[RMDB]
RNA sequence: GGGAACGACUCGAGUAGAGUCGAAAAAUCACCGGUGGGGAACCCCAUACGGCAACGGCGUAGAAGUAAAUGCUAACCAAUCCGUGGUAUCUACGCGACGGAGCAUCCACGGAUAACUCUAACAAGGCAGGUCUGAUCGAUUCGUCGAUCAGACCUGAAAAGAAACAACAACAACAAC
Reactivity to 2A3 in 0.01 (KOAc 150mM, MgCl2 10mM, bicine 150mM(pH8.5), 24C), signal-to-noise 1, nucleotides 027 to 126: a000u150c010a000c010c020g000g070u020g000g050g070g110a180a170c000c010c010c010a000u080a070c030g000g000c120a140a000c000g020g000c000g000u000a000g000a000a010g040u160a060a090a020u160g000c050u040a000a110c040c110a020a020u070c000c000g040u040g000g000u000a010u150c000u000a000c040g100c000g120a030c150g030g090a010g000c070a000u020c000c000a000c000g030g020a000u020a020a010c000u000c000u110a000a000c100a020a020g120g040